[RMDB]
RNA sequence: GGGAACGACUCGAGUAGAGUCGAAAAGAUAUGGAGUCCUUACCGGAGAAUGUGUUCGGAAACGAACAAUUCAUCAUGACAGGUAAGGGACUCCUAAGUCAAAGUGAUUUGGUUCGCCAAAUCACAAUCAUGUUACAUCCUUCGGGAUGUAACAUGAAAAAGAAACAACAACAACAAC
Reactivity to DMS in 0.01 (KOAc 150mM, MgCl2 10mM, bicine 150mM(pH8.5), 24C), signal-to-noise 3, nucleotides 027 to 126: g000a000u000a030u000g000g000a010g000u000c000c000u000u000a000c000c000g010g010a210g000a000a010u010g020u000g020u000u000c010g030g000a010a010a070c010g010a010a010c000a060a030u000u000c010a210u010c220a160u030g010a220c300a130g000g000u010a000a040g010g030g020a010c000u000c000c000u000a000a060g010u000c000a090a130a140g030u000g000a010u000u010u000g000g010u000u000c300g010c010c000a030a010a000u000c000a000c000a100a130
Reactivity to 2A3 in 0.01 (KOAc 150mM, MgCl2 10mM, bicine 150mM(pH8.5), 24C), signal-to-noise 3, nucleotides 027 to 126: g010a000u010a020u040g010g000a010g010u000c000c000u000u010a000c010c010g090g080a150g060a050a040u300g120u000g000u300u000c010g000g000a010a020a020c000g000a010a010c000a000a000u000u010c010a050u150c080a060u280g260a190c200a160g000g030u040a020a060g080g000g000a020c000u010c010c000u010a000a000g000u000c060a070a100a090g000u000g020a010u010u010u010g060g040u030u160c300g030c160c000a010a000a010u010c000a000c000a010a060

This 177-nucleotide RNA was probed chemically with DMS and 2A3.
The reactions ran in a buffer of 150 mM KOAc, 10 mM MgCl2 and 150 mM bicine (pH 8.5), at 24 C.
Reactivities are given for positions 27 through 126.
Source: RMDB library TTRDES, as collected in RNAgym.